[RMDB]
RNA sequence: GGGAACGACUCGAGUAGAGUCGAAAAGAUAUGGACAUCCUGAUGAGCUUUGAUCUAGCUCGGAAACGAGCUAGGGAGCUCUGCCAGGAGUGUCCUAAGUCAAAAGCGUACGCUUCGGCGUACGCAAGGAUAGACAAGUGUUCGCACUUGUCUAUCCAAAAGAAACAACAACAACAAC
Reactivity to 2A3 in 0.01 (KOAc 150mM, MgCl2 10mM, bicine 150mM(pH8.5), 24C), signal-to-noise 2, nucleotides 027 to 126: g010a010u070a050u180g000g000a000c000a010u000c010c000u020g020a070u080g000a020g030c050u300u300u070g050a070u060c000u010a000g000c000u000c000g000g010a080a100a010c010g000a000g000c000u000a010g010g010g000a000g000c010u020c040u040g080c000c010a000g080g040a060g130u070g000u010c010c000u010a130a010g050u040c050a000a030a130a100g010c010g000u000a000c000g000c020u040u100c300g120g000c000g000u000a010c000g000c000a000a000
Reactivity to DMS in 0.01 (KOAc 150mM, MgCl2 10mM, bicine 150mM(pH8.5), 24C), signal-to-noise 3, nucleotides 027 to 126: g010a090u010a300u010g000g000a020c020a080u010c000c000u000g030a180u000g020a020g030c000u000u000u010g000a070u000c010u000a000g000c010u000c010g000g000a120a080a250c000g020a000g010c000u000a000g000g000g010a010g030c000u000c010u000g020c210c030a000g000g000a030g030u010g040u000c000c000u000a020a110g010u030c060a120a100a140a170g000c000g010u010a010c000g020c000u000u010c230g020g000c010g020u000a000c000g010c000a010a010
The record gives the reactivity of an RNA of 177 nucleotides to 2A3 and DMS. DMS adducts were read by reverse transcription with MarathonRT. The RNA was probed in 150 mM KOAc, 10 mM MgCl2 and 150 mM bicine (pH 8.5) at 24 C.